Description: An RNA of 177 nucleotides, treated with 2A3 and DMS and read out base by base. DMS adducts were read by reverse transcription with MarathonRT. The data come from the RNA Mapping Database (RMDB), library M2PK90.
RNA sequence: GGGAACGACUCGAGUAGAGUCGAAAAACUCUGAGCGUAAUCGCGUCUUGACUAGACUAUAGGUGACGUGAGUAUCUAUCCCAUUGUGCAUAGCGAUGGGAUAAUACGCUGAUCAAUAGUCACGGAAAUAGGUCCAAAGAUUCGUCUUUGGACCUAUAAAAGAAACAACAACAACAAC
Reactivity to 2A3 in 0.01 (KOAc 150mM, MgCl2 10mM, bicine 150mM(pH8.5), 24C), signal-to-noise 3, nucleotides 027 to 126: a000c070u060c070u130g090a030g010c010g050u080a050a090u050c020g020c010g050u020c020u130u160g100a070c020u040a050g000a010c010u010a020u020a100g120g030u050g020a010c010g010u020g040a030g000u000a020u040c070u010a000u010c020c000c000a000u010u010g030u040g050c120a140u280a180g000c000g010a010u000g000g000g000a000u000a010a000u000a000c000g000c010u030g020a100u090c030a020a010u000a010g010u010c020a010c140g060g010a110a190
Reactivity to DMS in 0.01 (KOAc 150mM, MgCl2 10mM, bicine 150mM(pH8.5), 24C), signal-to-noise 5, nucleotides 027 to 126: a060c040u000c050u000g010a050g010c020g010u010a090a130u000c020g020c030g010u000c010u010u000g010a160c090u000a100g010a040c010u000a010u000a060g010g000u010g010a100c090g010u010g000a040g010u000a010u000c210u000a000u000c000c000c000a020u000u000g010u000g000c300a110u000a110g010c000g020a010u000g000g000g000a000u010a000a010u000a020c000g000c010u000g000a100u010c110a060a020u010a020g010u000c000a200c210g000g000a060a070